This 177-nucleotide RNA was probed chemically with 2A3 and DMS.
Conditions: 150 mM KOAc, 10 mM MgCl2 and 150 mM bicine (pH 8.5), 24 C.
DMS adducts were read by reverse transcription with MarathonRT.
Source: RMDB libraries RFM100 and RFMREP, as collected in RNAgym.
[RMDB]
RNA sequence: GGGAACGACUCGAGUAGAGUCGAAAACUAGGUAAGGGUGAAACGGUGCGGUAAGAGCGCACCAGCGAGGUAGGUGACUACCUCGGCUAGGUAAACCCCACUGGGAGCAAGGCAUUAGGGCGUACCGAAGACCGAUGUAAUUCGUUACAUCGGUCUUAAAAGAAACAACAACAACAAC
Reactivity to 2A3 in 0.01 (KOAc 150mM, MgCl2 10mM, bicine 150mM(pH8.5), 24C), signal-to-noise 5, nucleotides 027 to 126: c040u040a030g040g050u130a120a150g030g010g010u080g080a100a060a040c030g000g020u020g000c010g010g030u030a050a010g000a010g040c000g000c000a000c000c000a000g000c000g000a000g000g010u000a000g000g110u140g070a110c000u000a000c010c000u000c000g000g000c000u040a030g000g050u080a040a050a060c010c010c000c000a040c020u020g020g010g000a080g050c050a040a040g070g000c020a020u010u130a060g010g020g000c010g030u040a050c000c010g030
Reactivity to DMS in 0.01 (KOAc 150mM, MgCl2 10mM, bicine 150mM(pH8.5), 24C), signal-to-noise 5, nucleotides 027 to 126: c040u010a060g000g010u020a060a170g000g010g010u000g010a070a120a110c100g030g010u000g000c000g010g000u030a100a110g010a250g010c010g000c050a000c000c010a020g010c000g000a020g010g010u000a010g000g010u060g000a220c000u000a010c000c000u010c000g000g000c030u010a030g010g010u010a030a120a070c050c010c000c060a080c080u000g000g000g010a080g020c090a040a090g000g000c070a050u010u010a080g000g020g020c050g010u000a060c060c030g010